Structure probing data (2A3 and DMS) for a 177-nucleotide construct. Reactivities are rounded to 0.1 and cut off at 0 and 3.
[RMDB]
RNA sequence: GGGAACGACUCGAGUAGAGUCGAAAAAUGUUCUGUAACUGAGAUGGAGAAAAAGAUGGUGUACAAAUGCAAAGGAGAGAGGUGGGCUAGCGCUGGCUGGGACUGGGAGGCAGCAGGAAGAAGGUGGAUAAAUAACGGGAUUCGUCCCGUUAUUUAUAAAAGAAACAACAACAACAAC
Reactivity to 2A3 in 0.01 (KOAc 150mM, MgCl2 10mM, bicine 150mM(pH8.5), 24C), signal-to-noise 2, nucleotides 027 to 126: a000u150g010u070u000c030u030g080u070a050a090c030u050g050a000g040a110u070g100g000a080g060a090a080a030a030a010g080a080u090g010g000u070g000u020a050c060a030a160a060u160g040c030a070a070a040g140g020a080g010a020g000a010g000g070u130g010g000g000c060u050a040g040c050g020c080u050g070g040c010u020g040g030g020a080c090u040g040g010g000a040g040g000c000a010g020c010a000g040g000a000a010g020a020a000g050g040u070g000g040
Reactivity to DMS in 0.01 (KOAc 150mM, MgCl2 10mM, bicine 150mM(pH8.5), 24C), signal-to-noise 5, nucleotides 027 to 126: a080u010g020u000u000c030u010g020u010a050a100c070u000g010a090g010a070u000g010g020a110g000a050a070a060a100a100g010a070u000g010g030u010g000u010a080c130a030a090a090u010g010c080a050a080a110g020g010a090g010a110g000a080g010g020u010g000g000g000c070u000a060g000c090g030c080u000g010g010c050u000g000g000g010a080c100u000g000g010g000a090g010g000c030a050g020c030a040g000g000a050a040g000a050a050g000g020u000g000g000
For 2A3, 1,945 sequencing reads were counted. It was measured as part of the RMDB library OK2TRN.